[RMDB]
RNA sequence: GGGAACGACUCGAGUAGAGUCGAAAAUUAGCGUUGUGCGGCGGCUUUAGGCCUGUCCUGUCUGCUCAGGCCUGACUGCUCGCGAACUUGUGCAUUUCCUGCACGGCGGUGGUGGCCGCGAGCAGGGUGCCUCCUUACUGUUCGCAGUAAGGAGGCAAAAAGAAACAACAACAACAAC
Reactivity to 2A3 in 0.01 (KOAc 150mM, MgCl2 10mM, bicine 150mM(pH8.5), 24C), signal-to-noise 1, nucleotides 027 to 126: u120u060a090g060c020g080u080u100g090u090g070c060g000g000c020g030g000c040u120u150u140a070g010g030c020c000u010g000u060c010c040u100g250u120c090u090g090c000u000c010a000g000g000c000c030u010g030a040c000u000g040c050u090c050g020c000g010a020a070c020u020u250g000u040g010c010a020u070u070u150c020c010u000g000c050a070c040g170g050c090g060g000u080g020g200u070g120g000c020c000g000c020g000a030g000c000a000g010g000g000
Reactivity to DMS in 0.01 (KOAc 150mM, MgCl2 10mM, bicine 150mM(pH8.5), 24C), signal-to-noise 1, nucleotides 027 to 126: u020u000a090g010c110g020u000u000g020u010g000c010g010g000c010g000g010c120u000u000u000a050g010g010c010c000u000g000u010c080c030u000g000u020c220u000g030c060u000c000a040g000g000c010c010u000g000a030c020u000g000c020u010c050g030c020g010a040a060c060u000u010g010u000g020c040a070u000u000u020c090c050u000g000c020a090c070g010g020c030g000g020u000g010g000u000g030g010c000c010g030c020g000a090g000c010a020g000g010g020